[RMDB]
RNA sequence: GGGAACGACUCGAGUAGAGUCGAAAACAUGCGCGUCCGAAGUAUGGGAAGCAUAAGUGGACACACCGCCUUCCGCUCGCAGCAUUGUAUCUCGAAUACUUUCUCGGUGCGGGGAGCCUAGGCGCGGUCUACUGUUGGGGUUCGCUCCGACGGUAGAAAAAGAAACAACAACAACAAC
Reactivity to DMS in 0.01 (KOAc 150mM, MgCl2 10mM, bicine 150mM(pH8.5), 24C), signal-to-noise 9, nucleotides 027 to 126: c070a070u010g000c020g010c040g010u020c010c020g010a100a150g020u010a050u010g000g000g010a080a090g020c060a060u020a070a090g010u010g000g000a090c180a110c080a080c090c080g000c050c020u000u000c020c040g000c010u000c010g000c150a040g010c110a030u000u010g010u000a020u000c030u040c190g000a120a030u010a020c020u000u010u010c050u010c040g000g000u020g010c010g000g000g000g000a080g010c020c060u010a140g010g000c010g010c050g000g000
Reactivity to 2A3 in 0.01 (KOAc 150mM, MgCl2 10mM, bicine 150mM(pH8.5), 24C), signal-to-noise 9, nucleotides 027 to 126: c030a020u070g000c010g000c010g040u010c010c010g030a050a000g020u050a030u110g030g010g040a030a000g040c010a030u030a070a030g040u030g030g020a010c010a010c000a010c050c020g000c000c000u050u010c000c000g000c000u000c000g020c040a020g000c010a020u000u020g000u020a010u000c070u030c060g050a170a010u010a010c000u010u010u000c020u000c010g020g000u090g000c010g000g000g010g030a020g010c000c010u010a020g000g000c000g000c010g010g010